[RMDB]
Chemical mapping of a 207-nucleotide RNA with 2A3.
For 2A3, 662 sequencing reads were counted.
It was measured as part of the RMDB library RNAMAK.
RNA sequence: GGGAACGACUCGAGUAGAGUCGAAAAUGCCAUUCGUGGCAGUCUUUUCCUAAGUCAACUGGAAUGUACUUGGAUUUAUGGAGGCAGUCGGAAACGACUGCCGUUGAAAUUGUCAGUACAUACCAGUUGAUAUGGACAACACCGGCUUCGGCCGGAACUAGUAAGUUCGCUUCGGCGAACUUACUAGAAAAGAAACAACAACAACAAC
Reactivity to 2A3 in 0.01 (KOAc 150mM, MgCl2 10mM, bicine 150mM(pH8.5), 24C), signal-to-noise 1, nucleotides 027 to 156: u010g000c000c010a030u050u050c240g110u040g020g000c010a010g080u090c020u020u140u080u010c000c000u050a230a080g010u010c000a000a000c010u000g000g000a030a030u010g020u070a020c040u100u100g000g000a090u100u230u040a050u150g050g020a020g010g000c000a000g000u000c020g000g030a180a020a040c020g000a000c000u000g010c000c000g020u070u020g010a000a000a000u020u040g040u060c000a000g010u010a010c000a000u040a120c000c000a070g000u000u000g000a000u000a010u020g090g010a010c010a100a060c060a200c080c000g020g000c030u070u140c180g120g000c010c040g000g000a000a000